[RMDB]
RNA sequence: GGGAACGACUCGAGUAGAGUCGAAAAAUGCCGGUGCACAACCGAAGCACCGCACAGCAGAAGCGCGCGAUCGGCAUGUUCGCUUCGGUGGUGCCGAUUCGCAUCCCGGUCGACGGGAACGAGCGUAGCACUGCCUACCUUUCGAGGUAGGCAGUGCAAAAGAAACAACAACAACAAC
Reactivity to 2A3 in 0.01 (KOAc 150mM, MgCl2 10mM, bicine 150mM(pH8.5), 24C), signal-to-noise 1, nucleotides 027 to 126: a000u070g050c080c060g000g000u010g020c020a060c050a180a210c040c060g050a060a040g000c000a030c010c000g000c000a040c030a080g080c010a030g050a190a040g060c000g020c000g010c010g040a000u020c020g000g000c010a030u040g120u200u170c070g000c000u040u040c070g100g000u000g010g030u000g040c030c000g000a010u150u060c000g000c030a040u000c010c000c020g020g000u230c090g120a180c020g010g030g000a020a050c050g040a020g000c020g030u050a020
Reactivity to DMS in 0.01 (KOAc 150mM, MgCl2 10mM, bicine 150mM(pH8.5), 24C), signal-to-noise 1, nucleotides 027 to 126: a050u020g020c160c030g070g000u000g000c050a020c080a090a200c110c070g000a140a090g000c000a050c030c020g010c140a030c120a160g000c020a070g040a110a210g000c040g000c040g000c000g000a020u000c030g010g000c040a030u000g040u000u010c210g000c030u000u000c040g010g030u050g030g000u000g000c000c060g010a020u000u020c020g060c110a200u000c000c000c010g000g000u010c210g000a180c000g000g000g000a060a070c140g000a130g040c000g030u000a120